[RMDB]
RNA sequence: GGGAACGACUCGAGUAGAGUCGAAAAGGGAUCCUUUACAGUCAGAUGACCACAGGAGAGAUGAGGGAGGGUUCCACUAAUUCGACCGCUACCCAUUAUCACAUCUCUUGCAAAUCCUGCUUAAGGGCACGAACCAUCAGUUCGCUGAUGGUUCGUGAAAAGAAACAACAACAACAAC
Reactivity to DMS in 0.01 (KOAc 150mM, MgCl2 10mM, bicine 150mM(pH8.5), 24C), signal-to-noise 2, nucleotides 027 to 126: g000g020g000a090u000c010c000u000u000u000a070c230a070g020u010c050a100g010a150u020g040a100c140c120a110c100a020g000g000a050g020a020g000a020u000g010a110g030g020g010a110g000g010g000u000u010c070c070a070c220u010a080a150u000u000c140g010a070c050c000g000c010u000a090c000c000c010a130u030u000a110u000c080a090c070a140u000c000u000c000u030u020g020c060a080a070a160u000c020c020u000g000c030u000u010a050a050g020g000g040
Overview
Structure probing data (DMS) for a 177-nucleotide construct.